Structure probing data (DMS and 2A3) for a 177-nucleotide construct.
For 2A3, 1,192 sequencing reads were counted.
RNA sequence: GGGAACGACUCGAGUAGAGUCGAAAACUUUUUUAGAGACAGGGUCUCACUCUGUUGUCAAGGCUAGAGUGCAGUGGUGCAAUCAAAUCAUAACUCACUGCAGCCCUGACCUCCUGGGCUCAAGUGAGGUGCCUUCUAUGUUCGCAUAGAAGGCACCAAAAGAAACAACAACAACAAC
Reactivity to DMS in 0.01 (KOAc 150mM, MgCl2 10mM, bicine 150mM(pH8.5), 24C), signal-to-noise 1, nucleotides 027 to 126: c050u000u020u040u050u070u060a040g090a050g000a000c020a070g010g010g020u000c090u020c020a010c090u040c060u000g000u000u040g070u010c090a040a100g000g000c000u000a070g000a110g000u000g040c060a010g010u000g030g080u000g000c270a100a060u090c290a050a180a120u040c160a010u010a050a030c050u000c000a000c000u000g060c090a040g000c000c000c000u010g000a070c010c080u000c000c000u000g000g000g020c000u030c020a070a070g000u020g000a030
Reactivity to 2A3 in 0.01 (KOAc 150mM, MgCl2 10mM, bicine 150mM(pH8.5), 24C), signal-to-noise 3, nucleotides 027 to 126: c000u180u140u030u000u190u170a040g000a010g020a000c050a040g060g000g060u060c080u060c130a020c000u090c020u050g060u080u130g070u110c040a050a030g020g000c000u060a010g000a010g170u060g010c060a000g030u030g120g000u070g040c040a020a150u030c080a250a030a080u120c090a070u100a230a090c000u000c050a000c000u010g040c030a010g000c000c000c000u050g010a090c010c020u080c000c050u050g020g010g000c010u030c040a080a070g100u160g080a030
Source information:
The reactions ran in a buffer of 150 mM KOAc, 10 mM MgCl2 and 150 mM bicine (pH 8.5), at 24 C.